[RMDB]
RNA sequence: GGGAACGACUCGAGUAGAGUCGAAAAAGACUUACCCACUGUCACAAGAACAGCAUGGGAAAGACCCACCCCAGUGACUCAGUUACCUCCCACUGGGCCAGUCCCAUGACAUGGGGAUUAUGGGAGCUACAAUUCAAGAUGAGAUUUAGGUGGGGACCUAUGUCCUUAUGUUCGCAUAAGGACAUAGAAAAGAAACAACAACAACAAC
Reactivity to DMS in 0.01 (KOAc 150mM, MgCl2 10mM, bicine 150mM(pH8.5), 24C), signal-to-noise 3, nucleotides 027 to 156: a060g010a120c020u000u010a140c010c000c000a030c010u000g020u010c010a280c120a140a150g000a100a020c010a090g000c040a120u000g020g070g020a050a040a110g020a170c010c010c000a110c010c000c020c030a110g020u020g010a050c010u000c010a050g000u000u020a080c080c070u000c020c020c010a070c040u010g030g020g000c040c030a070g000u000c010c000c000a090u010g020a100c080a250u000g030g030g030g000a180u000u010a070u010g020g000g000a050g010c070u000a070c080a090a080u010u020c050a090a120g000a200u000g000a160g010a140u000u000u000a050g000g000u000g010g010g000g010a070c110
Reactivity to 2A3 in 0.01 (KOAc 150mM, MgCl2 10mM, bicine 150mM(pH8.5), 24C), signal-to-noise 4, nucleotides 027 to 156: a000g120a050c030u050u090a090c000c010c000a010c010u010g000u000c010a060c070a300a180g060a300a010c010a060g070c060a140u090g000g010g020a010a050a020g040a050c000c000c000a040c030c000c000c010a050g060u030g080a060c030u000c060a060g030u100u140a210c020c010u010c000c030c020a000c010u010g000g020g000c030c000a010g010u020c010c000c020a030u110g030a070c040a050u070g040g030g000g000a000u070u060a050u090g010g010g000a020g000c020u060a060c090a100a140u100u190c040a090a040g130a190u130g010a030g030a100u070u060u180a080g060g000u090g010g010g010g000a010c010
Chemical mapping of a 207-nucleotide RNA with DMS and 2A3. It was measured as part of the RMDB library OK3TST. For DMS the reverse transcriptase was MarathonRT. The reactions ran in a buffer of 150 mM KOAc, 10 mM MgCl2 and 150 mM bicine (pH 8.5), at 24 C. High DMS reactivity at an A or C suggests that its Watson-Crick edge is free.